[RMDB]
RNA sequence: GGGAACGACUCGAGUAGAGUCGAAAAAAAGAUAUGGAGCCACACAACCAGCUUGGAUUUAUAGGCUAAGUACGGUCGGAAACGACCGUAUAUGCCUAUUGUCAGCUGUAGUGGCUCCUAAGUCAAACCUCUAGUAAGUCUUCGGACUUACUAGAGGAAAAGAAACAACAACAACAAC
Reactivity to 2A3 in 0.01 (KOAc 150mM, MgCl2 10mM, bicine 150mM(pH8.5), 24C), signal-to-noise 1, nucleotides 027 to 126: a000a000a010g090a040u120a080u190g010g000a000g030c050c000a010c010a050c060a050a190c150c000a010g010c040u150u190g150g000a020u230u300u080a010u020a000g000g000c000u000a150a020g000u000a000c000g030g000u010c060g040g040a130a110a150c000g010a000c000c000g020u000a010u000a000u000g000c000c000u010a010u000u010g000u000c000a000g010c000u020g000u040a030g010u030g000g000c020u020c000c000u010a000a000g010u000c000a010a080a120
Reactivity to DMS in 0.01 (KOAc 150mM, MgCl2 10mM, bicine 150mM(pH8.5), 24C), signal-to-noise 2, nucleotides 027 to 126: a050a050a130g040a020u000a300u010g000g000a000g040c010c010a010c010a030c160a230a190c300c010a000g030c070u060u000g000g000a000u000u020u010a000u000a000g000g010c000u010a040a300g010u010a010c010g010g000u010c010g000g000a100a160a270c000g000a030c030c000g020u010a010u010a300u000g000c000c000u000a000u000u010g020u000c000a040g020c000u000g010u000a050g000u000g000g020c000u000c000c000u000a010a050g000u010c020a090a140a160
An RNA of 177 nucleotides, treated with 2A3 and DMS and read out base by base.
It was measured as part of the RMDB library TTRDES.
2A3 adducts were read by reverse transcription with SuperScript II with manganese.
For DMS the reverse transcriptase was MarathonRT.
The RNA was probed in 150 mM KOAc, 10 mM MgCl2 and 150 mM bicine (pH 8.5) at 24 C.